[RMDB]
RNA sequence: GGGAACGACUCGAGUAGAGUCGAAAAGCACAGCAGCACAGCCAGCCGCUAUUACGACAACAACUAUCACGUCAACCUCACCAGUGGUGAGGUAAGCAUUUCUCCCGGCACGUGCAUCUCCUGGUAUCGGGAGGUGGGUAACAACACCAAAGUACCAGGACUGCAUUAGGUUCGCCUAAUGCAGUCCAAAAGAAACAACAACAACAAC
Reactivity to 2A3 in 0.01 (KOAc 150mM, MgCl2 10mM, bicine 150mM(pH8.5), 24C), signal-to-noise 2, nucleotides 027 to 156: g080c050a040c030a010g120c000a000g030c040a010c050a060g060c020c020a010g040c000c040g000c040u000a050u140u130a060c080g070a030c040a070a020c040a010a060c080u150a080u250c030a000c100g070u080c100a000a060c020c000u000c000a010c010c000a170g100u120g220g000u000g010a000g000g000u010a020a020g030c030a030u070u060u000c100u030c000c000c030g000g000c010a030c080g040u030g010c020a010u030c010u000c020c010u010g130g030u170a180u300c020g020g000g000a000g020g000u070g000g000g000u150a160a030c060a070a000c000a040c010c020a070a070a040g050u060a060c000c060a030